[RMDB]
RNA sequence: GGGAACGACUCGAGUAGAGUCGAAAAAGAAAUAGCGAUUCUCGAAGGAGUUGAGUCCUUCGACGAUUGCUAAGCAAAGAUGCAGAACUAUCAAUGAACGACUUUGCUCAUCUUUGUAUACAAAAAACGUGUAUAGAAGAUUCGUCUUCUAUACACGAAAAGAAACAACAACAACAAC
Reactivity to 2A3 in 0.01 (KOAc 150mM, MgCl2 10mM, bicine 150mM(pH8.5), 24C), signal-to-noise 7, nucleotides 027 to 126: a000g100a010a060a020u060a000g000c000g000a010u060u010c000u000c000g000a000a000g030g030a020g030u210u180g170a070g180u030c000c000u000u000c000g000a000c010g000a000u000u020g000c000u020a040a010g000c000a000a000a010g010a000u020g040c110a020g030a100a070c060u090a080u210c050a100a230u230g080a140a050c070g080a040c110u110u110u120g020c010u020c020a020u000c000u030u010u020g040u030a130u030a080c070a010a100a020a010a010a020
Reactivity to DMS in 0.01 (KOAc 150mM, MgCl2 10mM, bicine 150mM(pH8.5), 24C), signal-to-noise 8, nucleotides 027 to 126: a090g010a070a090a130u010a010g010c000g010a010u000u010c300u000c000g010a010a010g010g010a040g010u000u010g010a210g010u000c000c000u010u000c000g000a000c150g010a010u000u000g000c000u000a020a140g000c010a010a010a010g000a020u000g000c150a020g010a040a070c120u000a110u000c050a100a140u000g020a130a110c200g000a040c070u000u000u000g010c010u000c030a010u000c010u000u000u010g000u000a080u010a050c110a000a030a100a040a020a070
Conditions: 150 mM KOAc, 10 mM MgCl2 and 150 mM bicine (pH 8.5), 24 C. The record gives the reactivity of an RNA of 177 nucleotides to 2A3 and DMS. For 2A3, 14,431 sequencing reads were counted.